The record gives the reactivity of an RNA of 207 nucleotides to 2A3. Source: RMDB library OK3TST, as collected in RNAgym. For 2A3, 499 sequencing reads were counted. Reactivities are given for positions 27 through 156. The reactions ran in a buffer of 150 mM KOAc, 10 mM MgCl2 and 150 mM bicine (pH 8.5), at 24 C.

RNA sequence: GGGAACGACUCGAGUAGAGUCGAAAAUGGAGAGUGAGCUAGCCAACUUUGGGCCUCGCAUUAAUGAUAUCAAGAGGAUCAUUCAGAGCCGAGAGAGGGAAAUGAAAGACUUGAAGGAGAAGAUGAACCAGGUUGGUAGGGUGUGGGCCAUGCCAGAGCUCCACUAAUCAUUCGUGAUUAGUGGAGCAAAAGAAACAACAACAACAAC
Reactivity to 2A3 in 0.01 (KOAc 150mM, MgCl2 10mM, bicine 150mM(pH8.5), 24C), signal-to-noise 1, nucleotides 027 to 156: u120g030g010a000g010a020g030u130g030a000g060c060u110a020g020c100c000a070a030c100u040u080u210g010g010g000c000c000u020c010g010c040a010u050u170a070a080u110g070a020u020a030u150c040a060a020g040a000g110g000a060u000c060a000u150u110c000a050g040a040g220c070c070g010a000g030a020g040a020g070g020g010a000a090a070u120g000a100a030a000g030a040c040u060u040g050a060a020g030g100a040g010a040a010g000a040u080g010a010a000c000c060a030g040g000u030u070g010g000u020a020g000g050g020u050g000u010g020g010g000c020c010a010u040g020c000c070a030g180a030